[RMDB]
RNA sequence: GGGAACGACUCGAGUAGAGUCGAAAAUUCAUUUCUUCUAGCUGGACAACAUAGUGAGUUCUUCAUAACCUAUUUGCCUCAGCUACAGGGAGGCUGAUGCAAAGGCUAGGUAGUAUUAGGGCCCAAGAGACGUAGUGUUUUUCGAAACACUACGUCUAAAAGAAACAACAACAACAAC
Reactivity to DMS in 0.01 (KOAc 150mM, MgCl2 10mM, bicine 150mM(pH8.5), 24C), signal-to-noise 3, nucleotides 027 to 126: u000u000c090a090u010u000u000c020u010u010c030u000a070g010c020u040g000g000a060c080a050a080c120a060u010a080g020u010g010a090g030u000u000c090u000u000c110a080u000a060a060c060c010u000a120u000u000u000g000c000c030u000c030a020g000c010u000a080c090a130g010g020g020a120g010g010c010u010g000a010u010g020c010a020a030a040g010g010c080u000a030g000g010u000a030g000u000a070u000u010a080g010g010g000c000c030c040a090a120g010
Reactivity to 2A3 in 0.01 (KOAc 150mM, MgCl2 10mM, bicine 150mM(pH8.5), 24C), signal-to-noise 3, nucleotides 027 to 126: u050u000c000a020u060u050u070c020u030u000c020u020a010g000c020u010g040g020a030c010a140a010c010a110u080a060g110u080g090a080g030u090u010c000u080u050c040a060u070a110a030c000c010u050a090u050u040u010g020c010c010u010c010a010g020c030u020a070c040a050g100g030g030a050g000g000c000u000g010a000u010g030c030a040a000a000g030g000c030u020a020g040g030u020a010g010u010a080u070u080a050g010g030g000c010c000c010a030a010g120
This 177-nucleotide RNA was probed chemically with DMS and 2A3.
For 2A3, 4,753 sequencing reads were counted.
It was measured as part of the RMDB library OK2TST.
2A3 adducts were read by reverse transcription with SuperScript II with manganese.
Reactivities are given for positions 27 through 126.
For DMS the reverse transcriptase was MarathonRT.